[RMDB]
RNA sequence: GGGAACGACUCGAGUAGAGUCGAAAAUUGGCGAUCGGCGGGAAAACCAUGAAAACCAAGCCACUCCCGACAGCCCCGAUGGCGUGGGCCGAGAGUGCCGUGGAAACCACCACCAGCCCGCGCGAGCGCCAGCAAUGAUUUUCGAAUCAUUGCUGGCAAAAGAAACAACAACAACAAC
Reactivity to 2A3 in 0.01 (KOAc 150mM, MgCl2 10mM, bicine 150mM(pH8.5), 24C), signal-to-noise 2, nucleotides 027 to 126: u000u000g010g000c040g040a030u040c070g110g010c050g010g040g000a050a160a020a150c030c010a060u100g030a060a110a000a030c010c000a040a010g010c010c000a030c010u010c000c010c010g050a080c060a040g020c010c000c000c000g080a060u130g220g020c040g000u050g000g020g000c020c010g140a180g010a020g050u030g050c060c060g020u030g000g020a190a130a000c050c020a000c000c000a020c010c000a000g020c010c000c010g000c010g000c010g040a030g030c060
Reactivity to DMS in 0.01 (KOAc 150mM, MgCl2 10mM, bicine 150mM(pH8.5), 24C), signal-to-noise 3, nucleotides 027 to 126: u000u000g000g010c050g000a080u010c030g010g030c040g000g000g010a070a060a140a110c100c090a100u010g000a040a050a140a090c030c040a050a070g010c290c030a050c070u000c010c010c000g010a150c150a150g020c020c010c000c050g000a150u010g010g010c070g060u000g000g000g020c010c020g020a080g000a090g000u000g020c190c100g000u000g000g000a060a090a130c070c010a070c060c040a060c110c110a160g000c000c000c010g020c000g000c040g000a080g020c110
Background:
An RNA of 177 nucleotides, treated with 2A3 and DMS and read out base by base. It was measured as part of the RMDB library OK2TST. For DMS the reverse transcriptase was MarathonRT.